Chemical mapping of a 177-nucleotide RNA with DMS and 2A3. For DMS, 9,913 sequencing reads were counted. For 2A3 the reverse transcriptase was SuperScript II with manganese. The reactions ran in a buffer of 150 mM KOAc, 10 mM MgCl2 and 150 mM bicine (pH 8.5), at 24 C. For 2A3, 14,424 sequencing reads were counted.
[RMDB]
RNA sequence: GGGAACGACUCGAGUAGAGUCGAAAAGAUAUGGAUCACAUUAUUCGAUAAGCCACAGUCGGAAACGACUGAAUGGCUUUUGACGAAUUUUGUGAUCCUAAGUCAAAGACAUUGUUCGCAAUGUCAAGAACUUUAUGUAGUUCGCUACAUAAAGUUCAAAAGAAACAACAACAACAAC
Reactivity to DMS in 0.01 (KOAc 150mM, MgCl2 10mM, bicine 150mM(pH8.5), 24C), signal-to-noise 5, nucleotides 027 to 126: g000a020u000a280u000g000g000a010u000c000a020c000a000u000u000a010u000u000c010g010a170u010a030a020g020c000c000a090c010a010g000u010c010g010g010a070a050a120c010g010a020c000u000g010a060a090u000g010g010c000u000u000u010u000g010a170c160g000a010a000u000u000u000u000g010u000g010a000u000c000c000u000a010a090g000u000c020a110a150a140g000a020c010a010u000u000g000u000u000c260g030c010a000a000u000g000u000c010a140a140
Reactivity to 2A3 in 0.01 (KOAc 150mM, MgCl2 10mM, bicine 150mM(pH8.5), 24C), signal-to-noise 3, nucleotides 027 to 126: g020a000u040a000u120g000g000a000u000c000a010c010a000u010u030a010u020u020c060g120a120u080a300a030g000c000c000a010c000a000g010u010c000g020g020a090a020a030c010g010a000c010u000g010a030a140u040g000g000c000u000u010u010u010g030a040c030g000a010a000u010u010u000u010g000u000g000a000u010c000c000u000a010a010g000u010c020a040a050a120g000a000c000a010u010u030g030u050u090c120g030c150a030a010u020g000u010c010a010a060